Chemical mapping of a 177-nucleotide RNA with 2A3 and DMS.
RNA sequence: GGGAACGACUCGAGUAGAGUCGAAAACCAUCUUUCUCUGACUUGACUCUCUCUUCUCUUCGGAGGAUUGGGAGGAUAGGAUGGGAUUGUGAGGACUUUUCUUGCCAGUGUAUUACGUAUACACAACUACAGGUUAGUGUUUCGACACUAACCUGUAAAAAGAAACAACAACAACAAC
Reactivity to 2A3 in 0.01 (KOAc 150mM, MgCl2 10mM, bicine 150mM(pH8.5), 24C), signal-to-noise 3, nucleotides 027 to 126: c020c000a060u070c010u010u020u000c010u000c000u040g190a030c000u020u010g040a030c000u000c010u000c000u000c000u020u000c020u000c000u050u110c170g090g000a000g000g010a010u000u010g000g020g000a010g010g010a000u030a020g020g010a010u090g000g000g020a010u000u040g060u040g120a140g010g050a050c080u090u080u060u050c020u060u100g030c050c100a110g000u010g000u000a010u010u090a030c160g140u240a000u000a010c000a000c020a090a040c040
Reactivity to DMS in 0.01 (KOAc 150mM, MgCl2 10mM, bicine 150mM(pH8.5), 24C), signal-to-noise 3, nucleotides 027 to 126: c010c000a140u040c060u000u000u000c000u000c000u000g030a300c020u000u000g000a300c000u000c010u000c000u000c030u000u000c000u000c000u010u050c190g010g000a000g000g010a000u000u000g000g020g000a000g000g000a110u000a000g010g000a230u010g010g010g000a020u020u000g010u020g000a120g000g000a120c090u000u000u000u000c020u000u020g010c170c100a100g000u020g010u000a000u000u000a160c150g020u010a020u000a000c000a000c010a120a100c080
Reactivities are given for positions 27 through 126. DMS adducts were read by reverse transcription with MarathonRT. The reactions ran in a buffer of 150 mM KOAc, 10 mM MgCl2 and 150 mM bicine (pH 8.5), at 24 C.